[RMDB]
RNA sequence: GGGAACGACUCGAGUAGAGUCGAAAAGAAAGGGACCCCUGCCACGGGACGCAGCCAGUCGAUCCCAGGCAUGUUUUUGCAUGCCGGACUGACCCCUUCUGCGGGCAGGAGGGGUGGUCCCGAAAGAGGUAAUUAUGCGUUUCGACGCAUAAUUACCAAAAGAAACAACAACAACAAC
Reactivity to 2A3 in 0.01 (KOAc 150mM, MgCl2 10mM, bicine 150mM(pH8.5), 24C), signal-to-noise 1, nucleotides 027 to 126: g050a030a030a040g000g000g000a020c000c000c030c000u000g000c000c020a100c130g120g030g060a010c020g010c030a020g000c050c030a000g020u010c010g060a190u020c000c020c000a000g000g020c010a000u020g120u030u250u060u130u300g010c000a010u000g000c000c000g000g000a000c000u000g020a000c000c000c010c000u010u000c000u030g030c100g120g140g130c020a000g000g010a000g000g010g010g000u000g020g000u000c000c000c010g000a030a040a000g150a030
Reactivity to DMS in 0.01 (KOAc 150mM, MgCl2 10mM, bicine 150mM(pH8.5), 24C), signal-to-noise 3, nucleotides 027 to 126: g000a080a100a130g000g020g000a060c020c010c300c030u010g010c020c050a180c160g010g000g010a070c150g010c060a020g050c140c020a000g020u000c020g010a050u000c010c010c000a180g010g000c010a000u000g010u000u000u010u020u020g000c000a010u000g000c010c000g030g020a010c010u000g000a090c010c000c000c010u000u000c010u010g020c050g010g020g010c000a030g000g000a010g000g000g020g010u000g000g000u000c010c000c010g000a040a110a110g000a160

The data come from the RNA Mapping Database (RMDB), library OK2TRN. This 177-nucleotide RNA was probed chemically with 2A3 and DMS. For 2A3, 2,282 sequencing reads were counted. For DMS, 2,703 sequencing reads were counted.